Structure probing data (DMS and 2A3) for a 177-nucleotide construct. High 2A3 reactivity points to a flexible backbone, as in loops and unpaired stretches. Values cover nucleotides 27 to 126. For DMS the reverse transcriptase was MarathonRT. The reactions ran in a buffer of 150 mM KOAc, 10 mM MgCl2 and 150 mM bicine (pH 8.5), at 24 C. For 2A3, 2,798 sequencing reads were counted.

RNA sequence: GGGAACGACUCGAGUAGAGUCGAAAAGAUAUGGAAAAUGGAGCUGGUGAGGCGACUCGGAAACGAGUCGCUCCCCACCACCAGAACUACUCCUAUUCCUAAGUCAAAAGGUGGCUUCGGCCACCAAGGUAGAAACUAUCUUCGGAUAGUUUCUACCAAAAGAAACAACAACAACAAC
Reactivity to DMS in 0.01 (KOAc 150mM, MgCl2 10mM, bicine 150mM(pH8.5), 24C), signal-to-noise 2, nucleotides 027 to 126: g020a060u010a200u000g000g020a010a030a170a210u010g000g030a050g030c040u010g010g000u000g000a120g010g020c000g010a000c010u000c000g010g000a050a100a070c020g010a020g010u000c000g000c000u000c050c020c010c060a300c020c000a000c010c020a030g010a030a000c050u010a300c020u000c000c010u000a300u000u000c000c000u020a070a160g020u000c100a100a070a140a100g000g030u000g000g000c020u010u030c130g010g000c000c010a020c000c000a000a000
Reactivity to 2A3 in 0.01 (KOAc 150mM, MgCl2 10mM, bicine 150mM(pH8.5), 24C), signal-to-noise 1, nucleotides 027 to 126: g010a040u180a120u160g010g010a000a070a060a110u200g000g000a010g040c000u010g000g000u000g000a020g020g000c010g020a010c000u010c010g040g040a080a040a040c000g000a000g010u000c000g000c010u000c010c000c000c010a020c000c000a000c000c000a010g010a070a040c130u300a060c010u110c020c000u000a090u020u020c000c010u000a110a040g080u100c100a040a080a050a140g010g030u020g030g000c030u050u110c300g100g000c020c020a010c000c000a010a000